This 177-nucleotide RNA was probed chemically with DMS and 2A3.
2A3 adducts were read by reverse transcription with SuperScript II with manganese.
For DMS, 3,347 sequencing reads were counted.
The RNA was probed in 150 mM KOAc, 10 mM MgCl2 and 150 mM bicine (pH 8.5) at 24 C.
RNA sequence: GGGAACGACUCGAGUAGAGUCGAAAAGAUAUGGAUCUCGCGAUAAGCUGAUGGUCGGAAACGACCACAGCUUUUGACGCGAGAAUCCUAAGUCGGCGGUAGUGCGAACUUCGGUUCGCACUACCAACUAACUAUCCAGCUUCGGCUGGAUAGUUAGAAAAGAAACAACAACAACAAC
Reactivity to DMS in 0.01 (KOAc 150mM, MgCl2 10mM, bicine 150mM(pH8.5), 24C), signal-to-noise 3, nucleotides 027 to 126: g010a030u000a300u000g000g000a040u000c010u000c000g010c000g030a170u000a040a030g020c000u000g020a140u000g010g010u000c000g000g000a040a080a150c000g010a030c000c000a020c000a000g000c000u000u000u000u010g010a140c040g000c000g000a010g000a020a010u000c000c000u010a040a140g010u000c020g010g020c230g020g020u000a000g010u000g020c000g000a020a010c000u000u010c180g010g000u000u000c000g000c000a000c000u000a000c000c000a000a050
Reactivity to 2A3 in 0.01 (KOAc 150mM, MgCl2 10mM, bicine 150mM(pH8.5), 24C), signal-to-noise 2, nucleotides 027 to 126: g020a030u070a040u130g000g010a010u010c010u030c000g010c000g070a160u080a270a040g010c010u030g040a300u020g290g000u010c020g000g000a040a040a000c010g000a000c000c020a000c000a000g000c080u060u060u020u060g000a000c000g010c000g000a010g000a000a000u000c000c010u000a110a030g040u050c030g050g160c180g000g000u000a000g000u000g000c010g030a010a000c010u100u150c300g050g040u020u010c000g010c010a000c010u000a000c020c000a000a010